[RMDB]
RNA sequence: GGGAACGACUCGAGUAGAGUCGAAAAUUAACGGUUGGGCUAAACCCUUCCUCCGCUGGCGUUACAUCGUAAAUUUUCCCGACUGUAAGCGCGUCCGUAUUUGACAUUGUGCAUUUGAUUUUCAUUAUCACACCUCAAACUCUUUAACCAGAACCGGUAGCUAUGUGAAGUUCGCUUCACAUAGCUAAAAAGAAACAACAACAACAAC
Reactivity to DMS in 0.01 (KOAc 150mM, MgCl2 10mM, bicine 150mM(pH8.5), 24C), signal-to-noise 1, nucleotides 027 to 156: u000u000a090a090c040g000g010u010u000g000g000g020c020u020a080a070a300c030c010c000u010u020c050c000u040c030c090g020c030u000g010g040c040g050u020u000a030c050a060u010c090g000u000a040a050a240u010u000u010u010c020c040c050g020a130c050u010g020u000a050a050g020c020g030c050g010u010c020c050g000u020a060u000u000u020g010a090c060a120u000u020g020u000g020c060a160u000u010u010g000a170u000u010u010u000c060a050u000u000a060u010c030a060c040a040c020c080u000c020a060a060a030c070u000c020u020u000u000a070a050c060c050a120g020a050a080c040c050g000g000
Reactivity to 2A3 in 0.01 (KOAc 150mM, MgCl2 10mM, bicine 150mM(pH8.5), 24C), signal-to-noise 3, nucleotides 027 to 156: u050u030a030a010c030g000g000u010u020g100g030g020c100u180a010a050a150c000c000c000u030u000c020c010u030c010c000g000c110u030g040g010c030g020u030u040a010c010a060u100c030g050u100a060a080a250u080u100u070u040c030c000c000g050a070c050u070g040u060a090a050g020c040g000c010g050u040c020c020g080u130a140u020u090u110g050a040c030a030u070u130g030u020g020c050a080u020u020u130g120a160u040u080u110u100c080a110u060u110a050u080c030a020c000a030c080c000u040c030a090a020a070c030u030c000u120u200u100a060a080c060c160a020g040a110a050c010c020g090g010
The data come from the RNA Mapping Database (RMDB), library OK3TST. The record gives the reactivity of an RNA of 207 nucleotides to DMS and 2A3. The RNA was probed in 150 mM KOAc, 10 mM MgCl2 and 150 mM bicine (pH 8.5) at 24 C.